[RMDB]
RNA sequence: GGGAACGACUCGAGUAGAGUCGAAAACGUGCCAUGUUCGCAUGGCACGAAAUAAAGGAAACAGGAAGGCUUCGGCGCACGAUGUAACAAGCGCAAAAUAAAAAACAUUUCACUUCGGUGAAAUGAAGUAGCGAUAAGAGUUCGCUCUUAUCGCUACAAAAGAAACAACAACAACAAC
Reactivity to 2A3 in 0.01 (KOAc 150mM, MgCl2 10mM, bicine 150mM(pH8.5), 24C), signal-to-noise 2, nucleotides 027 to 126: c000g000u030g050c010c000a010u010g000u040u040c160g010c130a000u010g000g000c020a010c000g010a000a000a000u110a010a050a000g070g030a040a050a010c010a040g080g040a070a010g030g010c030u040u040c020g060g000c020g010c010a040c090g020a000u100g060u210a080a060c060a140a050g020c020g000c030a110a030a000a040u090a050a070a000a000a020a020c000a010u000u010u010c000a000c000u040u070c180g060g010u000g010a030a000a010u000g010a030a010
Reactivity to DMS in 0.01 (KOAc 150mM, MgCl2 10mM, bicine 150mM(pH8.5), 24C), signal-to-noise 1, nucleotides 027 to 126: c010g010u000g010c000c000a030u000g020u010u020c180g040c020a000u010g010g000c010a010c000g000a040a060a080u010a020a060a070g000g000a070a080a110c060a030g000g000a100a060g040g020c000u000u000c080g010g000c050g040c010a030c100g040a100u010g000u000a090a040c120a090a110g000c010g020c070a090a010a040a090u100a020a060a030a120a070a150c000a010u000u000u000c010a030c010u000u000c140g010g000u000g000a000a010a000u000g040a050a050